[RMDB]
RNA sequence: GGGAACGACUCGAGUAGAGUCGAAAAAGAAGGUUCGGUAAACGGGAAGUAGGAAGGACGGAAGCGAAUCUGCAAAUCUUCCUCAAAGAAGUUACGCAGGAAGUCGUGCAGCGUGCCUUUCAGGUUAGUACUAAAAUACCUUCGGGUAUUUUAGUACAAAAGAAACAACAACAACAAC
Reactivity to 2A3 in 0.01 (KOAc 150mM, MgCl2 10mM, bicine 150mM(pH8.5), 24C), signal-to-noise 5, nucleotides 027 to 126: a000g050a020a010g030g010u060u090c070g010g080u110a060a050a090c040g040g000g020a050a030g040u140a060g040g010a020a010g010g000a010c030g040g060a020a020g020c020g020a020a040u050c000u000g000c000a010a010a220u030c000u010u010c010c020u110c050a100a130a010g030a020a020g020u080u080a050c100g000c010a000g060g040a070a030g060u040c030g050u070g060c010a030g040c020g070u080g090c000c010u040u080u070c030a010g090g010u060u120a020
Reactivity to DMS in 0.01 (KOAc 150mM, MgCl2 10mM, bicine 150mM(pH8.5), 24C), signal-to-noise 7, nucleotides 027 to 126: a120g000a060a070g000g000u010u000c080g020g010u010a030a070a080c100g010g010g010a050a080g010u000a150g020g000a040a010g010g010a050c200g010g000a090a170g010c050g000a050a060u020c010u000g000c010a070a160a080u000c010u000u000c000c030u010c230a080a090a130g010a030a030g000u000u010a130c260g000c050a000g000g020a050a060g010u000c100g010u000g000c080a090g000c090g010u000g010c020c010u000u000u000c050a100g010g010u000u010a100